The record gives the reactivity of an RNA of 177 nucleotides to 2A3 and DMS.

RNA sequence: GGGAACGACUCGAGUAGAGUCGAAAAGAUAUGGACAUACUUUCUUCAACAGCUAACUGCUUCGGAAACGAAGUUUAGACAUGAAGGGUAUGUCCUAAGUCAAAAGCUCGAGGUUCGCCUCGAGCAACCUGUGGUAUUAGUUCGCUAAUACCACAGGAAAAGAAACAACAACAACAAC
Reactivity to 2A3 in 0.01 (KOAc 150mM, MgCl2 10mM, bicine 150mM(pH8.5), 24C), signal-to-noise 7, nucleotides 027 to 126: g010a000u010a010u050g000g000a000c000a010u000a010c010u270u300u300c030u030u040c070a300a190c060a300g000c000u010a010a050c130u170g020c010u040u010c000g020g000a030a000a000c000g000a010a010g010u020u000u010a030g000a060c160a300u300g000a000a010g010g000g000u000a000u000g000u010c000c000u000a000a010g010u000c000a020a040a100a120g000c000u000c000g000a000g050g020u120u130c300g140c070c000u000c000g000a000g000c000a010a000
Reactivity to DMS in 0.01 (KOAc 150mM, MgCl2 10mM, bicine 150mM(pH8.5), 24C), signal-to-noise 4, nucleotides 027 to 126: g000a020u000a090u000g000g000a020c000a000u000a010c000u000u000u010c030u000u000c000a140a080c180a210g000c000u010a010a020c300u010g010c020u010u000c000g010g000a020a010a070c000g020a020a000g010u000u000u000a010g000a020c060a290u010g020a000a020g010g000g000u000a000u000g010u000c000c000u000a000a040g000u010c000a110a090a090a110g000c010u000c000g000a010g010g010u000u010c260g010c010c000u000c000g020a010g000c010a010a000
For 2A3 the reverse transcriptase was SuperScript II with manganese. The 2A3 profile rests on 16,319 reads.